[RMDB]
RNA sequence: GGGAACGACUCGAGUAGAGUCGAAAAGCACUGGCGUUCGCGCCAGUGCAAAGAACGCGACGGCCACCGAAAUAAAACGGUGAAGAACGCGACAACCCGUAAAAACGUCGAACUUCGGUUCGACGAAGUUCUAAUAACCGUUCGCGGUUAUUAGAACAAAAGAAACAACAACAACAAC
Reactivity to 2A3 in 0.01 (KOAc 150mM, MgCl2 10mM, bicine 150mM(pH8.5), 24C), signal-to-noise 4, nucleotides 027 to 126: g010c000a000c000u000g020g030c030g040u070u110c240g030c000g010c120c000a000g000u000g010c010a000a010a000g000a070a020c010g000c010g020a040c100g100g040c060c010a000c010c010g090a100a170a030u300a050a160a040a020c010g010g000u020g000a020a040g020a050a010c000g000c000g010a000c010a030a070c010c010c000g010u050a070a030a000a050a070c020g000u000c000g010a000a000c000u030u060c210g100g010u010u000c000g000a010c010g000a010a000
Reactivity to DMS in 0.01 (KOAc 150mM, MgCl2 10mM, bicine 150mM(pH8.5), 24C), signal-to-noise 2, nucleotides 027 to 126: g000c000a000c000u000g000g010c000g020u000u000c210g030c000g040c000c010a000g020u000g000c000a000a050a100g000a080a070c030g000c030g020a110c100g010g000c140c010a010c010c000g010a070a140a050u020a070a100a100a080c010g000g000u000g010a170a110g020a140a060c010g020c010g000a080c050a080a100c020c000c000g000u000a120a050a040a120a090c020g000u000c010g020a040a020c000u000u050c100g020g010u000u000c000g000a030c000g010a010a040
About this RNA
An RNA of 177 nucleotides, treated with 2A3 and DMS and read out base by base. The data come from the RNA Mapping Database (RMDB), library M2PK50. Values cover nucleotides 27 to 126. For 2A3 the reverse transcriptase was SuperScript II with manganese.